The record gives the reactivity of an RNA of 177 nucleotides to 2A3 and DMS. Reactivities are given for positions 27 through 126. The RNA was probed in 150 mM KOAc, 10 mM MgCl2 and 150 mM bicine (pH 8.5) at 24 C. Reactivities are rounded to 0.1 and cut off at 0 and 3. For DMS the reverse transcriptase was MarathonRT.
[RMDB]
RNA sequence: GGGAACGACUCGAGUAGAGUCGAAAAUAAUAUAGGCGGAUGGACAUAUCCUGAAGGUAUACAAGUAAUAGGUGUAACUACUGUACAUGAAGCAUUGUCAUUUGCUCUUCAUUCAUAAAACAUCAAGUGGAAUCUUGGUAUUCGUACCAAGAUUCCAAAAAGAAACAACAACAACAAC
Reactivity to 2A3 in 0.01 (KOAc 150mM, MgCl2 10mM, bicine 150mM(pH8.5), 24C), signal-to-noise 1, nucleotides 027 to 126: u210a070a010u050a000u140a060g030g100c000g020g000a000u000g000g000a000c020a080u110a140u100c010c000u000g060a020a010g060g010u060a000u000a050c020a290a000g290u050a170a180u000a060g060g000u060g000u050a020a020c020u170a000c000u210g050u150a080c000a000u210g020a010a020g030c020a050u000u000g260u150c000a060u010u010u010g000c000u000c140u060u000c000a130u130u120c000a050u270a090a090a000a000c010a060u010c020a060a000g000
Reactivity to DMS in 0.01 (KOAc 150mM, MgCl2 10mM, bicine 150mM(pH8.5), 24C), signal-to-noise 1, nucleotides 027 to 126: u010a110a080u010a070u010a120g000g030c090g000g010a080u010g000g040a050c070a020u000a090u010c090c000u000g000a240a040g020g000u000a010u010a070c160a050a120g000u000a070a040u000a060g000g030u000g000u040a000a090c010u000a000c100u000g000u060a000c050a040u000g000a130a040g000c050a090u000u010g020u000c090a090u000u010u000g000c110u050c060u000u000c050a030u010u030c050a080u000a040a060a070a070c090a030u000c120a000a170g020